[RMDB]
RNA sequence: GGGAACGACUCGAGUAGAGUCGAAAAGCGCGCCGGAUCUUUAUUCCUCCGAUACCCGGCACCCUUGGAACGCUCCCAAAAUUUUCUAGGUAAAAGCUUCCCGUGUGUACAGCUCCAGGAGGGAUUGGUCCUUUUUGAUUAAACAGAGCCCAAUUUAGUUUUAUAUCAGUUUCGACUGAUAUAAAACAAAAGAAACAACAACAACAAC
Reactivity to 2A3 in 0.01 (KOAc 150mM, MgCl2 10mM, bicine 150mM(pH8.5), 24C), signal-to-noise 1, nucleotides 027 to 156: g010c000g030c040g020c080c050g050g000a050u050c040u050u190u130a080u190u080c020c060u000c010c000g050a050u060a100c000c010c000g010g000c000a010c000c000c030u060u070g000g010a050a010c040g020c010u120c000c050c000a110a160a180a270u150u180u080u110c060u100a050g000g010u100a130a140a000a080g020c030u030u020c040c040c000g030u070g000u010g000u080a120c040a130g010c020u040c010c080a060g030g000a000g010g020g000a000u010u040g010g010u000c000c020u090u050u020u110u180g060a060u020u110a040a070a070c060a040g070a020g120c050c000c010a010a010u150u050u060a040
Structure probing data (2A3) for a 207-nucleotide construct. The reactions ran in a buffer of 150 mM KOAc, 10 mM MgCl2 and 150 mM bicine (pH 8.5), at 24 C. 2A3 adducts were read by reverse transcription with SuperScript II with manganese. It was measured as part of the RMDB library OK3TST.